[RMDB]
Annotation
An RNA of 207 nucleotides, treated with 2A3 and DMS and read out base by base. The reactions ran in a buffer of 150 mM KOAc, 10 mM MgCl2 and 150 mM bicine (pH 8.5), at 24 C. For DMS the reverse transcriptase was MarathonRT. The data come from the RNA Mapping Database (RMDB), library M2RFPK. 2A3 adducts were read by reverse transcription with SuperScript II with manganese.
RNA sequence: GGGAACGACUCGAGUAGAGUCGAAAACUCCCCUCAAAAUCGUUUCAGUCCAAAAUUGAUUCGGCGGCCCUGUCAUGAGGCCGAAACGAACGCACGUACCCCUUCGAAUGGCGUCGGGGAGUCAGCGAAAGCACUGACCCUUUCGAGGGUCAGUGAACCUUAAUAUCACGUUCGCGUGAUAUUAAGGAAAAGAAACAACAACAACAAC
Reactivity to 2A3 in 0.01 (KOAc 150mM, MgCl2 10mM, bicine 150mM(pH8.5), 24C), signal-to-noise 4, nucleotides 027 to 156: c050u050c010c010c000c010u120c090a140a140a060a080u090c040g000u020u030u030c060a110g050u100c050c040a060a120a090a130u090u130g040a100u130u080c070g050g010c010g030g000c080c000c020u080g080u190c070a110u120g020a050g010g000c000c000g020a000a000a000c000g020a050a000c020g030c010a050c080g080u180a140c000c000c010c000u010u060c020g100a240a170u160g130g000c030g010u020c030g010g000g000g010a010g030u030c070a020g010c030g090a110a030a010g080c010a000c000u000g000a000c000c000c000u030u020u000c070g080a030g000g000g000u000c000a000g000u000g000a000a000
Reactivity to DMS in 0.01 (KOAc 150mM, MgCl2 10mM, bicine 150mM(pH8.5), 24C), signal-to-noise 1, nucleotides 027 to 156: c010u000c000c010c020c050u030c060a050a070a140a050u000c020g040u000u000u000c020a050g000u000c060c010a080a100a050a190u000u000g000a090u000u010c140g000g020c060g030g020c060c000c010u000g030u000c180a080u000g010a080g000g010c000c010g000a020a010a040c010g000a040a070c040g000c060a040c040g000u000a090c030c010c010c020u010u010c030g020a130a180u000g000g010c060g010u000c080g020g020g050g000a020g010u010c080a110g000c030g000a100a070a090g020c020a000c010u000g020a020c000c000c000u000u000u010c270g000a030g010g000g010u000c000a010g030u010g000a030a080